[RMDB]
Conditions: 150 mM KOAc, 10 mM MgCl2 and 150 mM bicine (pH 8.5), 24 C. Chemical mapping of a 177-nucleotide RNA with 2A3 and DMS. It was measured as part of the RMDB library OK2TRN. For 2A3, 12,532 sequencing reads were counted.
RNA sequence: GGGAACGACUCGAGUAGAGUCGAAAAGAUCGACGAUCUGGCGUCUCUCGAAGAAGACUUUCCGUUGCACGUCGCCGUCUACCGGCGGGUGAUUGCGGAGUUCAACGGUGGUACACCGUUUCCGCUCUCUAAAACUUGGAUUCGUCCAAGUUUUAGAAAAAGAAACAACAACAACAAC
Reactivity to 2A3 in 0.01 (KOAc 150mM, MgCl2 10mM, bicine 150mM(pH8.5), 24C), signal-to-noise 7, nucleotides 027 to 126: g010a020u060c050g210a090c160g000a060u000c020u030g030g030c030g100u020c010u000c000u000c040g130a190a120g030a060a020g040a070c030u060u080u010c030c020g060u070u180g050c020a000c010g190u090c000g050c010c000g020u040c050u160a150c090c030g070g000c030g020g020g000u030g030a110u030u170g000c000g010g000a030g010u100u110c040a010a000c010g000g000u030g060g060u170a130c050a010c060c010g000u020u020u000c000c010g000c020u010c010
Reactivity to DMS in 0.01 (KOAc 150mM, MgCl2 10mM, bicine 150mM(pH8.5), 24C), signal-to-noise 9, nucleotides 027 to 126: g010a020u000c010g010a190c190g010a050u000c010u000g010g010c080g010u000c010u000c010u000c030g000a300a100g000a080a050g000a250c240u000u000u000c000c000g020u010u010g010c030a020c020g000u000c000g020c010c010g000u000c160u010a120c240c020g000g010c040g000g010g010u000g000a090u010u000g010c000g010g000a050g000u000u000c170a030a020c010g010g010u000g010g020u010a130c060a050c030c010g010u000u000u000c000c010g010c060u010c140